[RMDB]
RNA sequence: GGGAACGACUCGAGUAGAGUCGAAAAUUGAUAAUUUGUUGUGUAACUUCAUUUAAAUGAAUUGAAACAGAUUUAAUACAAGUGGAUGUAGGAUAACCGUCCGUCCUUUACAUUGGUAUAAAAGUGAACGACACAGACCUCUUCGGAGGUCUGUGAAGAUUCAUAAAAGGUUCGCCUUUUAUGAAUCAAAAGAAACAACAACAACAAC
Reactivity to 2A3 in 0.01 (KOAc 150mM, MgCl2 10mM, bicine 150mM(pH8.5), 24C), signal-to-noise 2, nucleotides 027 to 156: u050u090g010a020u040a300a040u070u000u060g000u010u000g020u010g030u040a040a060c020u000u020c010a070u090u070u180a170a130a090u100g020a010a040u020u080g050a030a040a060c050a030g070a090u040u120u090a080a030u060a100c010a070a080g030u040g110g050a040u080g020u230a030g000g040a020u050a070a050c000c000g050u010c010c020g040u030c000c000u020u030u000a040c020a070u040u110g070g030u060a020u060a110a060a020a050g090u120g020a070a010c030g060a000c000a010c010a000g000a000c000c000u000c000u000u040c090g100g000a000g000g000u000c000u010g000u000g010a000a000
Reactivity to DMS in 0.01 (KOAc 150mM, MgCl2 10mM, bicine 150mM(pH8.5), 24C), signal-to-noise 1, nucleotides 027 to 156: u000u010g020a210u020a040a050u000u000u000g020u000u000g010u010g000u000a140a080c050u010u000c010a050u000u000u000a130a070a080u020g000a030a120u000u010g010a190a090a130c040a070g000a080u000u000u000a070a140u010a060c020a000a010g070u000g030g000a090u000g020u000a020g000g020a070u000a030a170c050c130g050u000c060c030g030u010c030c000u000u010u000a030c030a040u000u000g000g020u020a020u000a020a070a070a110g000u000g010a050a040c030g040a300c030a040c010a030g010a070c010c010u010c030u000u000c300g000g020a030g020g010u000c000u000g000u030g000a000a070